The record gives the reactivity of an RNA of 207 nucleotides to DMS and 2A3.
For DMS the reverse transcriptase was MarathonRT.
2A3 adducts were read by reverse transcription with SuperScript II with manganese.
The DMS profile rests on 3,813 reads.
It was measured as part of the RMDB library RSTRND.
RNA sequence: GGGAACGACUCGAGUAGAGUCGAAAACCCACCUGAAGUACGUUAGAAGAGAAAAAUCAGGUUAGCUGUUCAUGUGGGCCCUGACAGGCGGCAAGUUGGGCAGUGAAACCUUAAGUAGUCUGAAUAUGAGUGUAGACGUUGGGGUGGCAAUAUGCUAGAAUAAACAAUGGUUCGCCAUUGUUUAUUCAAAAGAAACAACAACAACAAC
Reactivity to DMS in 0.01 (KOAc 150mM, MgCl2 10mM, bicine 150mM(pH8.5), 24C), signal-to-noise 2, nucleotides 027 to 156: c020c020c010a100c080c030u000g020a120a090g000u000a040c040g000u010u010a090g020a090a090g010a120g010a070a060a070a140a150u000c070a060g020g020u000u000a300g030c050u000g020u000u000c030a050u000g010u000g040g040g020c000c000c020u020g010a110c130a130g000g030c030g040g070c030a070a130g020u000u000g020g020g000c020a080g000u000g000a100a060a020c020c030u000u010a050a090g010u000a050g020u000c010u000g010a060a090u000a080u000g010a080g010u010g000u000a060g020a050c030g020u020u030g020g000g020g030u010g000g020c030a070a110u000a040u000g020c050u000a150
Reactivity to 2A3 in 0.01 (KOAc 150mM, MgCl2 10mM, bicine 150mM(pH8.5), 24C), signal-to-noise 4, nucleotides 027 to 156: c000c000c000a010c000c030u040g030a090a020g070u110a040c070g060u090u170a110g040a120a030g070a040g070a020a100a010a060a050u080c030a000g000g000u010u020a010g010c010u020g000u030u010c010a030u060g030u150g160g120g020c000c010c020u040g070a040c050a050g000g040c030g030g030c010a020a050g050u050u010g010g000g000c010a010g000u020g020a190a080a030c000c000u030u030a050a010g000u010a010g020u020c040u070g070a100a050u170a120u180g040a050g040u060g010u060a040g010a030c010g020u030u060g020g000g000g010u020g010g000c020a010a110u090a070u200g010c010u070a050